[RMDB]
RNA sequence: GGGAACGACUCGAGUAGAGUCGAAAACGAGUGCCAGGCAUGGACGGGGACGCUGCUGCUGGGCACAUGCCUUCUGUACUGCGCCCGCUCCAGCAUGCCCAUCUGCACCGUCUCCAUGAGCCAGGACUUCGGCUGGAACAAGAAGGAGGCCGGCAUCUAUGACACCAAUUUUCGAAUUGGUGUCAUAAAAAGAAACAACAACAACAAC
Reactivity to 2A3 in 0.01 (KOAc 150mM, MgCl2 10mM, bicine 150mM(pH8.5), 24C), signal-to-noise 4, nucleotides 027 to 156: c030g000a050g030u050g060c030c060a110g010g010c050a070u110g030g080a040c040g010g000g000g000a000c010g000c020u010g010c020u000g010c020u050g000g000g000c040a070c040a120u120g010c010c000u190u200c050u120g080u080a080c060u050g060c040g050c010c000c030g000c080u030c010c000a020g020c030a020u080g010c020c000c000a050u040c040u030g000c000a010c010c010g000u010c030u010c020c000a080u140g010a020g040c000c020a050g020g010a030c010u050u040c100g060g000c010u050g030g030a130a090c050a120a100g100a040a030g030g020a010g010g040c020c000g030g000c010a030u050c020
Reactivity to DMS in 0.01 (KOAc 150mM, MgCl2 10mM, bicine 150mM(pH8.5), 24C), signal-to-noise 2, nucleotides 027 to 156: c050g020a090g000u000g050c000c230a100g010g020c040a130u000g020g000a070c070g000g000g000g000a040c030g040c030u010g000c020u000g030c060u000g010g020g000c010a070c150a060u010g010c000c050u000u020c070u000g020u000a020c070u010g000c020g020c040c000c040g000c070u010c040c020a120g020c070a070u010g000c000c020c020a060u000c040u020g030c030a040c040c010g010u010c000u000c000c020a150u010g000a130g010c000c030a100g010g010a050c040u000u010c050g030g000c040u000g010g010a110a200c070a060a090g000a130a050g020g010a110g000g010c020c000g010g010c020a160u000c070